RNA sequence: GGGAACGACUCGAGUAGAGUCGAAAAGACUACCAAUAAGCCUGUAUUUGACUUAGUGAGCCGUAGUGUGAUAAGAACUCACACUAGUUUUAUAUCGGCAAGCCAGGAAUACUUAGCCGGUAGAGAAGAUAUUGUUUAAUUUCGAUUGGACGAUAUCAAAAGAAACAACAACAACAAC
Reactivity to 2A3 in 0.01 (KOAc 150mM, MgCl2 10mM, bicine 150mM(pH8.5), 24C), signal-to-noise 9, nucleotides 027 to 126: g030a020c010u030a020c010c010a060a100u130a100a020g030c010c010u030g020u040a100u030u040u070g060a070c020u030u040a010g020u030g060a000g010c010c010g040u010a000g000u010g010u000g020a010u060a240a140g120a140a060c030u000c000a000c000a000c000u000a000g000u000u020u040u080a150u020a030u070c010g000g000c000a010a000g020c010c020a020g040g000a020a010u040a050c010u050u060a020g020c020c000g000g000u010a020g010a010g020a090a020
Reactivity to DMS in 0.01 (KOAc 150mM, MgCl2 10mM, bicine 150mM(pH8.5), 24C), signal-to-noise 9, nucleotides 027 to 126: g010a170c030u010a030c020c010a120a100u010a080a130g010c020c060u000g010u000a020u010u010u010g000a120c050u020u010a080g010u010g000a300g010c010c010g020u000a010g010u000g000u000g000a010u020a110a160g020a120a210c210u000c000a000c000a000c000u000a020g000u020u020u030u030a080u020a060u040c000g000g010c000a050a200g010c030c100a080g010g000a060a030u020a050c010u010u020a100g010c010c060g000g010u000a010g010a110g000a090a070
The data come from the RNA Mapping Database (RMDB), library OK1LIB.
The record gives the reactivity of an RNA of 177 nucleotides to 2A3 and DMS.
Reactivities are given for positions 27 through 126.
The DMS profile rests on 63,676 reads.
The reactions ran in a buffer of 150 mM KOAc, 10 mM MgCl2 and 150 mM bicine (pH 8.5), at 24 C.
DMS adducts were read by reverse transcription with MarathonRT.
As a SHAPE reagent, 2A3 marks flexible, mostly unpaired nucleotides at the ribose 2'-OH.